RNA sequence: GGGAACGACUCGAGUAGAGUCGAAAAAUACUUCUCAGGAUGGCGCGUUGCAGUCCAACAAGAUCCAGGGACUGUACAGAAUUUUCCUAUACCUCGAGUCGGGUUCGGAAUCUAAGGUUGACUCGCUAAAACUUUACGUGGUUCGCCACGUAAAGAAGAAUAUCCUGGAGUUCGCUCCAGGAUAUUCAAAAGAAACAACAACAACAAC
Reactivity to 2A3 in 0.01 (KOAc 150mM, MgCl2 10mM, bicine 150mM(pH8.5), 24C), signal-to-noise 2, nucleotides 027 to 156: a000u140a020c070u050u050c010u000c000a000g050g010a010u060g030g030c050g000c030g100u030u060g000c000a000g010u000c010c000a060a120c070a170a100g100a110u120c070c080a050g000g000g010a000c000u010g000u030a020c010a030g100a190a100u090u040u040u040c010c000u090a090u110a130c010c010u020c010g000a000g030u010c000g040g000g040u020u010c020g010g050a030a050u050c040u070a160a020g050g040u040u060g020a060c020u010c060g000c030u060a100a070a070a080c010u020u000u000a000c000g000u000g040g020u040u020c140g040c170c000a000c000g010u000a000a000a000g000a000a010

Chemical mapping of a 207-nucleotide RNA with 2A3. Source: RMDB library M2RFPK, as collected in RNAgym.